RNA sequence: GGGAACGACUCGAGUAGAGUCGAAAAGAAGGACAUAACGCGAAGAAGCAGAGAGAAGACUGAAGUGACGCGACUCACUAGACGUCAACGACGGCAAGAGAGAGCCGAAGGAGACGAUCCUUAGGAGAAAUCCGACCACUUUCGAGUGGUCGGAUUUAAAAGAAACAACAACAACAAC
Reactivity to 2A3 in 0.01 (KOAc 150mM, MgCl2 10mM, bicine 150mM(pH8.5), 24C), signal-to-noise 2, nucleotides 027 to 126: g040a000a110g080g040a000c020a110u140a070a000c050g020c010g040a060a010g090a070a010g100c020a000g080a000g000a010g000a150a090g060a010c000u000g030a060a040g050u020g070a000c060g090c150g090a020c010u000c040a080c040u000a000g000a060c000g000u030c000a000a000c020g000a000c000g010g040c010a160a050g160a030g060a000g000a000g030c000c010g000a000a000g000g020a000g000a000c000g020a020u010c000c000u040u110a030g020g020a000g140
Reactivity to DMS in 0.01 (KOAc 150mM, MgCl2 10mM, bicine 150mM(pH8.5), 24C), signal-to-noise 2, nucleotides 027 to 126: g000a080a100g000g020a040c110a040u030a050a120c190g000c090g010a110a070g000a160a000g000c060a090g010a010g000a220g030a050a090g000a100c060u000g010a130a020g030u030g010a050c130g040c100g010a150c020u020c020a020c060u000a040g000a050c010g000u000c010a010a130c070g000a300c010g000g000c040a010a110g010a170g010a050g000a080g000c020c000g010a030a240g000g000a300g010a090c070g000a060u000c040c010u030u040a150g020g000a100g000